[RMDB]
Conditions: 150 mM KOAc, 10 mM MgCl2 and 150 mM bicine (pH 8.5), 24 C. This 207-nucleotide RNA was probed chemically with 2A3 and DMS. As a SHAPE reagent, 2A3 marks flexible, mostly unpaired nucleotides at the ribose 2'-OH. The DMS profile rests on 1,587 reads. Reactivities are rounded to 0.1 and cut off at 0 and 3. For 2A3, 2,050 sequencing reads were counted.

RNA sequence: GGGAACGACUCGAGUAGAGUCGAAAAGAAAGAAAGAAGCGAGCUGGCGCAGCCGCACGGGCAACCGUCAAUCCAGCACUUCACAAGUCUUGUCGUUCUGACAGGACAUCCAUCAAACCACCGGGAAAAAAGGACUACAGCUUCGGCUGUAGUCCAACAAUGACUAGAACUUCGGUUCUAGUCAUUGAAAAGAAACAACAACAACAAC
Reactivity to 2A3 in 0.01 (KOAc 150mM, MgCl2 10mM, bicine 150mM(pH8.5), 24C), signal-to-noise 3, nucleotides 027 to 156: g040a000a040a000g030a020a110a010g020a080a010g020c070g070a020g020c060u000g010g000c050g020c070a090g110c050c090g040c070a020c030g000g020g000c040a090a080c010c010g030u030c010a010a070u040c000c000a000g040c030a030c040u070u080c050a060c040a260a040g000u000c010u010u000g000u000c020g140u290u150c160u300g010a010c010a000g010g000a000c000a010u000c010c010a040u100c040a080a060a050c020c030a030c080c070g010g000g140a080a050a020a010a000a030g020g000a060c000u000a000c010a010g020c010u040u120c230g110g000c000u000g000u000a000g000u010c000c000a000a000
Reactivity to DMS in 0.01 (KOAc 150mM, MgCl2 10mM, bicine 150mM(pH8.5), 24C), signal-to-noise 1, nucleotides 027 to 156: g000a180a090a080g000a070a220a300g000a040a000g040c030g010a190g070c020u010g010g020c100g020c120a210g070c010c020g000c130a080c080g020g000g050c070a130a130c050c020g000u000c030a110a110u000c010c010a030g000c010a110c040u000u000c070a090c070a120a100g000u000c010u010u000g000u000c010g030u000u030c050u010g020a020c000a030g000g030a040c030a010u000c090c010a130u000c020a070a140a160c010c010a110c050c050g030g000g000a040a030a030a220a110a110g000g030a050c000u010a000c020a000g030c040u000u010c300g020g000c000u000g000u000a000g030u000c000c010a010a020